Overview
Structure probing data (DMS and 2A3) for a 177-nucleotide construct. Reactivities are given for positions 27 through 126.
RNA sequence: GGGAACGACUCGAGUAGAGUCGAAAAGCAGCAGGGAGCGCAGGAUCGGGUUGACGAGGCGAAGGAGGGCCGCCGGUGGGUGUGCGAUGUCUACCGCAUACGACUGAUCUGUCAUGCCUUCACCGUAGUAAUAGCCGUCAUUCGUGACGGCUAUUACAAAAGAAACAACAACAACAAC
Reactivity to DMS in 0.01 (KOAc 150mM, MgCl2 10mM, bicine 150mM(pH8.5), 24C), signal-to-noise 2, nucleotides 027 to 126: g030c070a050g020c020a080g000g000g000a060g000c060g030c110a100g010g020a100u010c080g010g000g040u010u000g000a140c050g040a060g000g010c040g010a090a080g000g010a130g030g020g000c000c050g000c060c020g000g000u000g010g000g040u000g000u000g000c000g010a050u010g000u040c110u040a090c080c030g000c020a000u010a050c050g000a040c030u000g010a020u020c050u030g000u020c060a060u030g000c000c050u020u010c010a060c000c030g040u040a080
Reactivity to 2A3 in 0.01 (KOAc 150mM, MgCl2 10mM, bicine 150mM(pH8.5), 24C), signal-to-noise 4, nucleotides 027 to 126: g040c030a000g010c010a000g000g000g050a040g020c040g000c020a020g010g060a060u090c020g020g030g000u050u080g010a040c020g050a070g030g030c020g010a030a010g030g030a020g000g030g000c000c000g070c020c000g020g010u060g000g090g020u020g000u000g000c020g040a030u080g070u110c030u050a060c040c040g030c030a040u040a050c020g030a010c040u040g030a100u030c010u030g070u070c010a040u090g050c020c000u090u080c030a060c050c040g050u080a050